Chemical mapping of a 177-nucleotide RNA with 2A3 and DMS. The RNA was probed in 150 mM KOAc, 10 mM MgCl2 and 150 mM bicine (pH 8.5) at 24 C. For DMS, 4,595 sequencing reads were counted.
RNA sequence: GGGAACGACUCGAGUAGAGUCGAAAAGAUCUGUAACAAGCCUACGAGUCGACCAGUAGGCUUGCACACGCAUACUCUUCGAAGUAUGGUCUUCGGACGGUCGACUUCGUGUGCGAGCAGAUCGAAAGGGUGUGUGGGCCUUCGGGUUCACACACCCAAAAGAAACAACAACAACAAC
Reactivity to 2A3 in 0.01 (KOAc 150mM, MgCl2 10mM, bicine 150mM(pH8.5), 24C), signal-to-noise 3, nucleotides 027 to 126: g000a000u030c000u000g000u030a070a080c070a070a000g020c000c000u000a000c000g050a030g120u080c020g030a090c020c000a000g010u020a010g000g050c000u000u030g000c000a010c000a000c010g080c040a000u010a080c000u020c040u160u230c100g020a020a010g010u070a060u180g110g020u030c020u030u030c030g110g020a050c070g030g000u070c010g030a040c040u110u120c020g030u020g000u010g020c000g010a050g010c010a000g020a010u010c010g000a050a020a030
Reactivity to DMS in 0.01 (KOAc 150mM, MgCl2 10mM, bicine 150mM(pH8.5), 24C), signal-to-noise 1, nucleotides 027 to 126: g010a000u000c000u000g030u000a100a200c210a060a150g000c010c000u000a000c000g010a080g000u000c100g000a030c050c010a170g010u000a030g030g000c010u000u010g000c110a090c050a020c040g000c110a010u000a030c010u040c040u030u020c120g010a070a000g000u000a040u000g010g000u010c010u000u000c120g000g000a070c100g020g010u000c100g000a030c140u000u000c000g020u000g000u000g000c000g040a170g000c010a000g000a000u010c000g000a060a080a130